[RMDB]
RNA sequence: GGGAACGACUCGAGUAGAGUCGAAAAGUAUCAUUCGUGAUACGGCGUGGGGUCUGCGACAUGCGAAGGGCAUCGAUCAUACUGAAGCCUCCACGGUAUGGGAGCCUUUUUGCAACAGCGCAGACGGAGGCACCCUCUCUUUGGAUUUCGAUCCAAAACGUCUAAUCUCGUUCGCGAGAUUAGACGUAAAAGAAACAACAACAACAAC
Reactivity to 2A3 in 0.01 (KOAc 150mM, MgCl2 10mM, bicine 150mM(pH8.5), 24C), signal-to-noise 2, nucleotides 027 to 156: g010u010a000u040c030a020u060u230c260g090u030g000a000u020a010c020g030g000c100g070u110g020g080g000g010u020c020u010g020c020g120a270c200a040u000g000c020g010a000a000g020g010g020c040a070u300c090g010a030u000c000a000u010a000c010u040g040a130a020g000c000c000u080c010c000a020c010g000g000u000a000u000g000g000g020a020g010c000c000u140u210u020u130u280g080c060a120a080c060a200g250c010g000c010a010g000a020c020g030g070a010g000g030c020a020c000c020c010u050c020u020c030u060u050u030g000g000a010u000u210u170c210g110a020u000c010c000a020a010a010
An RNA of 207 nucleotides, treated with 2A3 and read out base by base. For 2A3, 1,170 sequencing reads were counted. It was measured as part of the RMDB library RNAMAK. Values cover nucleotides 27 to 156. The reactions ran in a buffer of 150 mM KOAc, 10 mM MgCl2 and 150 mM bicine (pH 8.5), at 24 C.